[RMDB]
RNA sequence: GGGAACGACUCGAGUAGAGUCGAAAACAAGAUCGGUGGAUAGCAGACCUAUCAAUAUCUAGGAGAACUGUGCUAUGUUUAGAAGAUUAGGUAGUCUCUAAACAGAACAAUUUACCUGCUGAACAAAAAAAUCCAAUGGCGUUCGCGCCAUUGGAAAGCUCUUAUGUCUGUUCGCAGACAUAAGAGCAAAAGAAACAACAACAACAAC
Reactivity to 2A3 in 0.01 (KOAc 150mM, MgCl2 10mM, bicine 150mM(pH8.5), 24C), signal-to-noise 1, nucleotides 027 to 156: c080a080a000g040a070u060c070g020g000u000g000g000a080u010a050g010c000a010g020a060c000c020u020a030u140c040a030a080u060a100u260c090u110a050g040g000a150g060a090a030c060u100g050u040g110c020u040a030u130g000u000u010u000a050g000a180a010g000a020u070u060a040g110g000u080a010g040u000c000u000c010u000a020a000a030c020a040g050a040a000c050a040a080u050u080u080a070c000c030u030g030c040u050g080a080a020c070a060a070a010a010a010a000a060u050c000c000a000a000u030g000g000c020g020u040u030c090g000c000g000c040c000a000u000u020g000g000a000a000a010
Chemical mapping of a 207-nucleotide RNA with 2A3. Values are in units of 0.01, from 0 to 300, in steps of 10. 2A3 adducts were read by reverse transcription with SuperScript II with manganese. Values cover nucleotides 27 to 156. It was measured as part of the RMDB library M2RFPK.